An RNA of 177 nucleotides, treated with DMS and 2A3 and read out base by base. For DMS, 5,217 sequencing reads were counted. 2A3 is a SHAPE reagent: it acylates the 2'-hydroxyl of flexible nucleotides of all four kinds.
[RMDB]
RNA sequence: GGGAACGACUCGAGUAGAGUCGAAAAAUAGAACCACUGGAUCUACCUCCAAUCAUUCAAAGACUCCAUGGCCUCAGCGCAUUUUCACUCCACAGUUACUCUCCAGGUGAAAUCAAUAGGGUGGCCGCAUACCCUACGCUUUCGAGCGUAGGGUAUGAAAAGAAACAACAACAACAAC
Reactivity to DMS in 0.01 (KOAc 150mM, MgCl2 10mM, bicine 150mM(pH8.5), 24C), signal-to-noise 3, nucleotides 027 to 126: a100u010a070g000a070a130c030c000a060c080u010g010g000a050u020c030u020a080c040c010u000c020c030a050a070u020c110a050u010u000c070a060a040a080g000a050c010u000c050c050a050u030g000g000c060c000u010c030a080g000c080g070c020a090u040u010u010u010c050a090c040u010c100c030a060c090a050g010u010u000a070c070u010c000u000c020c040a070g000g030u010g010a120a060a060u060c080a030a050u020a060g030g010g010u000g000g010c050c020g000
Reactivity to 2A3 in 0.01 (KOAc 150mM, MgCl2 10mM, bicine 150mM(pH8.5), 24C), signal-to-noise 7, nucleotides 027 to 126: a000u180a040g050a050a020c010c020a020c050u040g050g010a050u020c010u050a050c010c010u020c030c010a040a060u060c050a080u140u130c080a120a080a050g040a100c040u010c030c020a070u130g020g000c000c010u060c040a040g030c030g010c060a040u040u030u060u080c030a030c030u050c010c030a050c020a060g020u030u050a090c020u020c000u020c050c010a020g000g050u040g060a030a040a070u090c060a030a110u090a080g100g000g000u020g030g020c010c000g010